The data come from the RNA Mapping Database (RMDB), library TTRDEL. The record gives the reactivity of an RNA of 177 nucleotides to DMS and 2A3.

[RMDB]
RNA sequence: GGGAACGACUCGAGUAGAGUCGAAAAGAUAUGGAGGUUCGCGAUAAGAUAUCGAUCGGAAACGAUCGAAUAUCUUUUGACGCGAUCUCCUAAGUCAAACUAAAGCUGUCUUCGGACAGCUUUAGAACACAGAGGGAAACUUCGGUUUCCCUCUGUGAAAAGAAACAACAACAACAAC
Reactivity to DMS in 0.01 (KOAc 150mM, MgCl2 10mM, bicine 150mM(pH8.5), 24C), signal-to-noise 2, nucleotides 027 to 126: g000a030u000a270u010g000g010a020g010g010u010u010c000g040c000g010a100u020a000a020g020a010u010a010u000c000g010a000u000c010g000g000a090a050a160c000g020a010u000c000g000a010a030u000a000u000c000u000u000u010u010g000a240c030g010c030g010a010u000c020u000c000c010u000a000a040g000u000c020a110a110a300c000u000a000a010a000g010c000u000g000u000c010u000u010c240g000g000a000c000a010g000c000u000u000u000a000g010a120a140
Reactivity to 2A3 in 0.01 (KOAc 150mM, MgCl2 10mM, bicine 150mM(pH8.5), 24C), signal-to-noise 1, nucleotides 027 to 126: g000a000u060a030u110g000g040a010g110g030u190u290c030g020c020g000a030u040a160a140g010a000u000a020u020c000g020a010u000c000g020g030a090a030a000c020g000a000u000c020g020a010a020u010a000u010c000u030u030u060u070g070a030c000g010c000g000a000u000c020u000c000c000u000a010a020g000u020c050a120a080a150c020u000a010a010a000g000c020u000g000u000c010u050u190c300g040g000a000c010a010g000c010u000u000u000a000g000a010a000
As a SHAPE reagent, 2A3 marks flexible, mostly unpaired nucleotides at the ribose 2'-OH. For 2A3, 1,778 sequencing reads were counted. DMS adducts were read by reverse transcription with MarathonRT.